[RMDB]
RNA sequence: GGGAACGACUCGAGUAGAGUCGAAAAGGCCUUCCUCAGCAUGGCAGCCUCAGUGUAAUUGGACUUACUUGGUGGCUGAGAGCUCUAAAAGUUAGUGUCCCAGUGAAUAAGGAGGAAGCUGUAUGGCUUUUUGUGACCUUGCCUUGGUAGUCAGGCAGCCCUACUAAAUAUUCGUAUUUAGUAGGGCAAAAGAAACAACAACAACAAC
Reactivity to 2A3 in 0.01 (KOAc 150mM, MgCl2 10mM, bicine 150mM(pH8.5), 24C), signal-to-noise 5, nucleotides 027 to 156: g050g000c010c010u050u050c040c040u080c020a020g000c030a100u140g110g010c020a020g050c000c010u040c030a080g020u030g020u180a060a080u090u100g070g050a050c020u010u040a010c000u030u080g080g000u140g130g000c000u020g080a050g020a020g110c000u040c040u170a100a130a040a050g050u090u050a040g020u050g070u090c060c000c010a030g050u060g120a140a080u130a150a090g090g000a010g020g010a010a020g020c020u030g040u110a100u130g030g000c040u020u000u010u050u120g100u090g090a090c000c000u020u020g000c020c010u030u000g050g020u040a030g080u020c010a000g000g000c010a000
Reactivity to DMS in 0.01 (KOAc 150mM, MgCl2 10mM, bicine 150mM(pH8.5), 24C), signal-to-noise 2, nucleotides 027 to 156: g010g000c000c020u000u010c030c020u000c030a170g020c000a150u010g010g000c050a050g010c020c020u000c060a060g000u000g010u000a060a130u000u000g000g020a300c130u010u000a040c030u000u000g010g000u000g010g000c020u020g030a100g000a160g000c010u000c030u020a070a090a100a130g020u000u000a070g030u000g010u000c000c000c020a190g020u000g000a110a110u000a070a080g030g010a090g040g000a060a100g030c010u000g030u010a100u010g010g000c010u000u000u000u000u000g020u010g010a080c010c010u000u000g010c010c160u000u010g020g000u000a080g030u020c060a050g030g040c080a170
The record gives the reactivity of an RNA of 207 nucleotides to 2A3 and DMS. Conditions: 150 mM KOAc, 10 mM MgCl2 and 150 mM bicine (pH 8.5), 24 C. For DMS, 6,513 sequencing reads were counted. The 2A3 profile rests on 2,904 reads.